[RMDB]
RNA sequence: GGGAACGACUCGAGUAGAGUCGAAAACAUCUUUCCUCCCUACACAGUGACUCCAGCUUGGGAGGGGCAGGGCUAGGCUGAGCUAGCACUCCCUGUGGUGUCUGCCUGCCACGUGCAGCUCUGGAGUAAAACCUGGAGAAGUUCGCUUCUCCAGGAACCUAGCUACUAGCUUCGGCUAGUAGCUAGGAAAAGAAACAACAACAACAAC
Reactivity to DMS in 0.01 (KOAc 150mM, MgCl2 10mM, bicine 150mM(pH8.5), 24C), signal-to-noise 1, nucleotides 027 to 156: c090a080u010c090u010u010u010c020c010u000c010c020c010u000a140c150a190c220a200g010u010g030a100c040u010c010c010a080g000c170u010u000g020g000g020a160g050g000g020g030c070a020g050g030g000c000u020a000g000g030c010u030g010a300g010c040u000a020g000c020a050c000u020c050c000c020u000g000u000g010g020u000g000u000c050u000g000c110c030u000g000c020c000a080c200g000u040g050c040a150g020c020u000c060u000g020g000a050g040u000a080a050a050a170c050c000u010g010g000a010g020a020a030g040u020u000c300g050c000u010u000c010u000c000c000a000g000g000a010a050
Reactivity to 2A3 in 0.01 (KOAc 150mM, MgCl2 10mM, bicine 150mM(pH8.5), 24C), signal-to-noise 3, nucleotides 027 to 156: c020a070u110c100u120u170u060c020c010u070c020c000c020u150a080c130a040c070a160g120u050g080a040c010u000c000c010a010g020c040u020u070g030g000g000a000g000g000g010g000c000a000g000g020g000c010u280a010g050g000c010u040g050a050g110c050u110a020g000c020a010c020u020c000c040c010u020g020u040g030g030u020g040u020c040u050g030c010c000u060g050c020c020a140c140g100u210g010c020a020g020c020u020c020u080g000g000a000g000u000a000a060a010a000c010c000u000g000g000a000g000a000a000g030u040u090c170g020c090u000u000c000u000c000c000a000g000g000a000a000